[RMDB]
The record gives the reactivity of an RNA of 207 nucleotides to DMS and 2A3. The reactions ran in a buffer of 150 mM KOAc, 10 mM MgCl2 and 150 mM bicine (pH 8.5), at 24 C. 2A3 adducts were read by reverse transcription with SuperScript II with manganese. For DMS the reverse transcriptase was MarathonRT. For 2A3, 3,071 sequencing reads were counted.

RNA sequence: GGGAACGACUCGAGUAGAGUCGAAAAAUCCUCAGGUUCAUAAGCGUGAUGAUUAGGUGUUCAUGCUCCAUGCAUGACAUGUGCCUCCUUUGAACCUUGUUACGACCUUGGCACAUUACCCAUCUGAAAAAGACGUUCGCGUUCGCGCGAACGUCAAUCAUACUCCUAGGUUCGCCUAGGAGUAUGAAAAAGAAACAACAACAACAAC
Reactivity to DMS in 0.01 (KOAc 150mM, MgCl2 10mM, bicine 150mM(pH8.5), 24C), signal-to-noise 2, nucleotides 027 to 156: a100u000c010c010u010c100a030g000g010u000u000c010a020u000a040a050g010c090g000u000g000a170u000g030a130u000u000a100g040g020u020g000u000u000c000a010u010g000c000u000c180c230a190u000g020c050a030u000g050a030c160a090u050g010u000g050c030c010u000c100c030u000u000u000g020a040a020c010c010u000u020g020u010u000a130c100g000a080c060c030u020u000g020g050c020a020c070a110u000u000a120c010c020c020a130u000c040u020g000a090a130a080a160a200g010a020c010g040u000u010c010g000c030g060u000u010c300g020c000g010c000g000a010a000c020g010u000c020a000a070
Reactivity to 2A3 in 0.01 (KOAc 150mM, MgCl2 10mM, bicine 150mM(pH8.5), 24C), signal-to-noise 4, nucleotides 027 to 156: a000u030c000c000u020c010a020g000g020u010u010c010a020u070a260a050g020c090g120u100g080a080u040g030a060u100u220a070g000g040u050g040u100u050c010a010u010g000c030u090c180c040a110u280g010c000a000u000g010a000c010a010u030g020u020g020c000c000u040c000c020u060u020u010g020a020a010c010c000u000u070g080u030u120a070c090g030a100c010c030u050u060g000g000c030a010c010a030u040u130a070c020c020c000a070u030c040u120g070a100a050a030a060a050g000a010c000g000u000u000c010g000c000g000u010u040c160g000c000g000c000g020a000a000c000g020u010c000a000a000